[RMDB]
RNA sequence: GGGAACGACUCGAGUAGAGUCGAAAAGCAGGGUCAUGCCUUUAUCAUCGUUCUGAAGGUGACGAAUAUUAUGUUCUGAAUACGAACAGGUUAUGACGCUCAUAUUAGCUCCUGAGAUUGGUAAAACAAUACAUAGUCAUUUCGAUGACUAUGUAUUAAAAGAAACAACAACAACAAC
Reactivity to DMS in 0.01 (KOAc 150mM, MgCl2 10mM, bicine 150mM(pH8.5), 24C), signal-to-noise 9, nucleotides 027 to 126: g020c150a030g010g010g020u000c010a020u000g010c010c000u000u000u000a160u010c080a060u000c030g010u000u010c190u010g020a120a150g010g020u010g000a040c060g010a060a050u010a080u010u010a130u010g010u000u000c010u000g010a110a100u010a090c290g000a010a020c040a030g000g010u000u010a020u000g010a030c030g000c020u000c040a110u010a120u000u000a110g010c100u000c010c010u000g000a100g000a120u000u000g010g010u010a050a070a070a090c180
Reactivity to 2A3 in 0.01 (KOAc 150mM, MgCl2 10mM, bicine 150mM(pH8.5), 24C), signal-to-noise 9, nucleotides 027 to 126: g030c050a000g040g020g010u010c010a010u020g000c000c000u070u130u070a090u060c070a030u020c020g080u130u050c060u150g150a160a050g060g030u070g010a010c020g050a030a030u100a070u290u120a090u100g040u020u000c020u040g160a180a070u150a100c040g000a010a000c000a010g020g000u140u260a010u020g010a000c050g080c110u010c010a040u090a110u140u140a030g020c020u030c030c010u040g050a080g030a160u090u170g060g050u150a050a050a020a030c050
The record gives the reactivity of an RNA of 177 nucleotides to DMS and 2A3. The DMS profile rests on 56,337 reads. For DMS the reverse transcriptase was MarathonRT. Conditions: 150 mM KOAc, 10 mM MgCl2 and 150 mM bicine (pH 8.5), 24 C. 2A3 adducts were read by reverse transcription with SuperScript II with manganese.